[RMDB]
RNA sequence: GGGAACGACUCGAGUAGAGUCGAAAAGAUCGGAAACAGCAGCACGUGAGUCCGCCUUAUGUGAAGGAUCGGCUGAAACACGAGGAAAUACUGAGCCAACGCAAGACGGUAGCCGAACAGUAGCAACAAAACGCUUACGUGUUCGCACGUAAGCGAAGCGUAGACUUUAGUUCGCUAAAGUCUACGCAAAAGAAACAACAACAACAAC
Reactivity to DMS in 0.01 (KOAc 150mM, MgCl2 10mM, bicine 150mM(pH8.5), 24C), signal-to-noise 1, nucleotides 027 to 156: g010a140u010c030g050g010a130a050a160c050a140g010c030a060g010c010a090c050g010u000g010a090g030u000c000c000g030c010c030u000u020a030u010g040u000g030a150a090g000g000a100u000c070g000g030c010u010g040a180a190a040c000a100c030g020a170g000g000a090a100a150u000a070c070u010g000a140g000c020c000a050a130c020g000c050a050a110g020a150c010g000g030u000a030g000c000c000g000a000a030c030a070g000u000a050g000c050a060a100c080a030a140a050a150c010g000c000u010u000a000c000g070u000g060u000u010c160g000c020a020c010g000u000a030a000g030c000g000a000a030
Reactivity to 2A3 in 0.01 (KOAc 150mM, MgCl2 10mM, bicine 150mM(pH8.5), 24C), signal-to-noise 3, nucleotides 027 to 156: g050a020u100c050g030g000a050a070a010c050a050g040c010a010g000c020a000c090g020u030g020a020g070u020c030c020g040c000c000u140u090a140u150g130u070g100a090a040g020g040a060u130c040g010g000c010u050g010a040a110a030c040a020c080g050a040g050g110a060a080a080u160a070c060u060g030a020g070c000c060a040a030c030g000c020a030a090g030a010c040g000g050u020a020g010c030c020g040a020a000c000a030g030u080a020g030c020a010a060c020a060a070a020a020c030g010c000u000u000a000c010g010u010g020u070u020c070g000c040a010c000g000u000a000a000g020c000g010a030a000
Chemical mapping of a 207-nucleotide RNA with DMS and 2A3. The data come from the RNA Mapping Database (RMDB), library M2RFPK. The DMS profile rests on 2,089 reads.